Chemical mapping of a 170-nucleotide RNA with DMS and 2A3. 2A3 adducts were read by reverse transcription with SuperScript II with manganese. It was measured as part of the RMDB library 15KLIB. High 2A3 reactivity points to a flexible backbone, as in loops and unpaired stretches.
RNA sequence: GGGAACGACUCGAGUAGAGUCGAAAAUUAGCUUAUUACGAACCUGUGCAGGGUCGUAAAAUGCUGAUGGCUCUUCUUUCUGAUAAUGCCUAUCUCAAAUGGGCGCGUGUUGAAGGUAAGGACGGAUUAAGGUAAAUCUUCGGAUUUACCAAAAGAAACAACAACAACAAC
Reactivity to DMS in 0.01 (KOAc 150mM, MgCl2 10mM, bicine 150mM(pH8.5), 24C), signal-to-noise 6, nucleotides 027 to 129: u030u010a010g020c030u020u040a140u000u000a040c010g010a030a030c010c010u000g010u080g080c190a100g000g030g000u000c000g020u000a000a000a020a050u030g010c020u020g020a000u000g040g000c010u010c040u030u010c040u000u000u000c000u000g000a030u000a000a080u040g010c000c000u010a000u010c090u020c220a050a070a050u030g010g000g030c000g000c100g010u020g000u030u020g010a030a040g000g000u030a060a070g020g010a010c040g010g010a070u040u040a090a140
Reactivity to 2A3 in 0.01 (KOAc 150mM, MgCl2 10mM, bicine 150mM(pH8.5), 24C), signal-to-noise 9, nucleotides 027 to 129: u010u010a000g000c010u090u130a030u030u000a130c010g030a130a210c010c000u070g050u150g200c220a100g010g020g000u000c000g000u010a000a000a010a030u120g000c000u000g000a010u040g030g000c010u000c000u060u030c000u020u050u020c040u050g040a060u050a170a040u140g010c010c000u030a050u040c140u030c100a090a130a040u090g010g010g010c040g010c040g020u080g010u040u080g000a030a010g020g010u060a020a030g020g010a020c050g030g020a080u190u120a150a040